[RMDB]
RNA sequence: GGGAACGACUCGAGUAGAGUCGAAAAAAUUUAAUCCUCAUCAUUGCUCAGCUGUGCGUUUUCGUCACAUCUGCAGGGGAAGCAGAUUACACACUAGAUGAUUCAUUUUGGAAUGAAGAAAGUCCUGGACAGAGAGAGAUUUCGAUCUCUCUCUGUCAAAAGAAACAACAACAACAAC
Reactivity to DMS in 0.01 (KOAc 150mM, MgCl2 10mM, bicine 150mM(pH8.5), 24C), signal-to-noise 2, nucleotides 027 to 126: a090a060u010u010u000a130a060u000c000c000u000c090a150u010c070a040u000u010g000c300u000c020a070g020c080u010g000u010g000c050g030u000u000u000u000c080g010u000c120a070c120a080u000c020u010g020c080a100g010g020g000g000a090a130g030c000a030g000a080u000u000a070c130a080c070a060c100u010a030g000a090u000g000a090u000u000c060a030u000u000u000u020g010g000a040a020u000g020a040a030g010a060a060a170g010u020c020c010u000g000
Reactivity to 2A3 in 0.01 (KOAc 150mM, MgCl2 10mM, bicine 150mM(pH8.5), 24C), signal-to-noise 2, nucleotides 027 to 126: a020a000u170u180u070a060a050u000c000c020u030c030a070u040c020a040u000u190g000c050u050c090a040g000c050u030g000u020g060c020g050u020u040u080u230c060g090u150c050a050c010a100u000c020u020g030c050a090g000g030g020g020a010a020g020c020a000g010a060u060u100a050c070a020c030a010c110u100a050g040a120u100g020a030u080u090c040a050u040u120u110u110g140g130a050a030u060g000a000a050g030a120a130a020g060u000c000c020u040g100